Description: An RNA of 207 nucleotides, treated with DMS and 2A3 and read out base by base. For DMS, 3,058 sequencing reads were counted. For 2A3 the reverse transcriptase was SuperScript II with manganese. As a SHAPE reagent, 2A3 marks flexible, mostly unpaired nucleotides at the ribose 2'-OH. Values are in units of 0.01, from 0 to 300, in steps of 10. The reactions ran in a buffer of 150 mM KOAc, 10 mM MgCl2 and 150 mM bicine (pH 8.5), at 24 C. It was measured as part of the RMDB library M2RFPK.

RNA sequence: GGGAACGACUCGAGUAGAGUCGAAAAGAGCGAUUAGACAAAGGGGUAGAGCUACAUAUUAGAUAGCUGUAUAAUCGUUCAAGUUACAUCAAAUCAUCUUCAAUAUUUAUUACUUACUUUCCUUUCUGCCAGAGUACGGUAUUCGUACCGUACUCAACGUCCUAUAGCUAUUCGUAGCUAUAGGACGAAAAGAAACAACAACAACAAC
Reactivity to DMS in 0.01 (KOAc 150mM, MgCl2 10mM, bicine 150mM(pH8.5), 24C), signal-to-noise 2, nucleotides 027 to 156: g000a060g020c000g000a060u000u010a030g010a100c060a060a100a100g020g030g050g020u010a090g020a040g010c000u000a030c080a140u000a240u000u010a160g020a200u000a020g000c000u010g030u000a090u000a020a030u000c060g000u000u000c010a090a130g010u000u010a110c070a090u000c050a060a100a130u000c070a050u000c040u000u010c040a060a080u010a070u000u000u000a070u030u010a070c060u010u000a110c060u000u020u000c020c010u000u010u000c040u040g010c040c020a090g000a030g040u000a020c000g000g010u000a070u000u000c300g010u010a020c000c030g010u000a010c010u000c000a030a060
Reactivity to 2A3 in 0.01 (KOAc 150mM, MgCl2 10mM, bicine 150mM(pH8.5), 24C), signal-to-noise 9, nucleotides 027 to 156: g010a000g010c000g000a010u010u030a040g040a060c080a050a090a060g030g020g030g040u070a040g030a010g060c010u020a020c020a080u250a170u210u130a090g140a260u030a010g010c010u000g020u020a030u010a020a000u010c010g000u010u000c020a030a010g030u060u130a060c060a090u100c070a080a100a100u070c040a080u050c080u240u070c080a120a100u090a200u140u170u100a130u080u090a060c030u060u040a040c010u040u060u080c010c000u060u080u040c020u050g070c040c040a040g000a000g010u000a000c010g010g000u010a020u010u050c120g020u020a000c000c000g000u000a000c010u000c000a000a000